An RNA of 177 nucleotides, treated with 2A3 and DMS and read out base by base. The data come from the RNA Mapping Database (RMDB), library M2PK50. The DMS profile rests on 2,371 reads. For 2A3, 5,283 sequencing reads were counted.
[RMDB]
RNA sequence: GGGAACGACUCGAGUAGAGUCGAAAAGAAGUACUGUUCGCAGUACUUCAAACGGCAACGGCAAGGCCAAGCCGAAGCCGAACGGCAAGCCCAAGGCCAAAAAAACCGUUCCCUUCGGGGAACGGAAACUAUAGUUAUAAUUCGUUAUAACUAUAGUAAAAGAAACAACAACAACAAC
Reactivity to 2A3 in 0.01 (KOAc 150mM, MgCl2 10mM, bicine 150mM(pH8.5), 24C), signal-to-noise 2, nucleotides 027 to 126: g000a000a000g010u020a000c010u010g040u070u140c290g000c120a000g010u000a000c000u000u000c000a000a000a000c020g010g000c010a020a020c020g000g000c020a060a110g130g020c040c030a010a040g000c000c000g000a000a000g000c000c010g020a080a030c070g070g000c050a030a030g020c020c000c020a030a070g030g000c000c000a060a020a010a020a000a010a060c010c000g000u020u000c020c000c010u010u020c160g060g010g000g010a000a000c000g000g000a030a000
Reactivity to DMS in 0.01 (KOAc 150mM, MgCl2 10mM, bicine 150mM(pH8.5), 24C), signal-to-noise 3, nucleotides 027 to 126: g000a020a010g000u000a000c000u000g020u000u020c180g010c010a010g000u000a000c000u000u010c010a020a120a150c020g010g000c020a020a300c000g010g020c010a060a120g030g020c090c150a190a110g050c010c000g000a030a300g010c010c010g000a040a080c230g010g010c050a090a050g000c010c000c010a190a100g010g010c010c030a000a020a030a050a090a080a110c020c000g000u000u000c000c000c000u000u000c190g030g010g010g000a000a010c010g000g000a020a020